RNA sequence: GGGAACGACUCGAGUAGAGUCGAAAAAAGGGCUCGUUCACCACAUUGAGCACAUUUUGCUGCAGGGUGUGCAGUGGCGAGGUGCUCGCGGGAGCAUUGAAUCCGUCUAGACCGAGCAGCAGCCCGCGUCCAUAUGUCGGUUCGCCGACAUAUGGACAAAAGAAACAACAACAACAAC
Reactivity to DMS in 0.01 (KOAc 150mM, MgCl2 10mM, bicine 150mM(pH8.5), 24C), signal-to-noise 2, nucleotides 027 to 126: a080a060g020g000g010c020u010c080g010u000u010c020a160c130c050a050c080a070u000u010g010a300g010c000a020c050a060u010u000u000u000g010c040u010g000c040a100g010g010g020u010g010u000g010c090a120g020u000g000g010c060g000a130g000g010u000g010c000u000c010g000c210g010g000g020a050g010c030a100u000u000g000a130a040u000c100c020g000u010c090u000a140g040a090c070c000g000a100g030c030a050g010c040a080g020c000c000c010g000c220
Reactivity to 2A3 in 0.01 (KOAc 150mM, MgCl2 10mM, bicine 150mM(pH8.5), 24C), signal-to-noise 2, nucleotides 027 to 126: a000a000g070g000g000c050u020c040g030u090u120c010a040c070c000a040c030a060u110u250g040a030g110c010a000c030a050u070u180u160u210g050c050u030g000c040a030g080g040g070u090g020u040g020c020a030g080u000g020g030c040g010a030g020g070u020g010c000u060c020g020c080g040g080g020a000g060c060a040u040u200g050a070a090u050c040c000g030u000c020u060a040g050a040c000c010g020a010g000c050a030g000c000a020g020c000c040c000g050c050

Chemical mapping of a 177-nucleotide RNA with DMS and 2A3.
For DMS, 1,703 sequencing reads were counted.
The RNA was probed in 150 mM KOAc, 10 mM MgCl2 and 150 mM bicine (pH 8.5) at 24 C.
In probing experiments dimethyl sulfate is read out at A N1 and C N3, which are open when not base-paired.
Source: RMDB library OK2TRN, as collected in RNAgym.
For 2A3 the reverse transcriptase was SuperScript II with manganese.